[RMDB]
RNA sequence: GGGAACGACUCGAGUAGAGUCGAAAAGAUAUGGAUCGGGACAUGCCUGGUCAUCGGAAACGAUGGAGAGGGCAACAGCCACGAUCCUAAGUCAAAACAUUGGUCCAUCUUCGGAUGGACCAAUGAAGGAAGGAGGCAAGUUCGCUUGCCUCCUUCCAAAAGAAACAACAACAACAAC
Reactivity to DMS in 0.01 (KOAc 150mM, MgCl2 10mM, bicine 150mM(pH8.5), 24C), signal-to-noise 1, nucleotides 027 to 126: g000a010u000a300u000g000g030a000u000c000g000g000g010a080c040a300u000g010c000c000u000g000g030u010c000a040u010c010g000g000a070a070a140c010g000a010u000g010g000a060g000a250g000g000g000c010a010a050c300a140g000c020c000a150c000g000a010u000c000c000u000a010a140g000u000c010a070a150a160a300c020a020u010u000g000g000u000c000c000a000u000c000u020u010c160g030g000a000u000g000g000a010c000c000a020a000u000g050a050a140
Overview
Source: RMDB library TTRDEL, as collected in RNAgym. The record gives the reactivity of an RNA of 177 nucleotides to DMS. DMS adducts were read by reverse transcription with MarathonRT. Conditions: 150 mM KOAc, 10 mM MgCl2 and 150 mM bicine (pH 8.5), 24 C. For DMS, 812 sequencing reads were counted.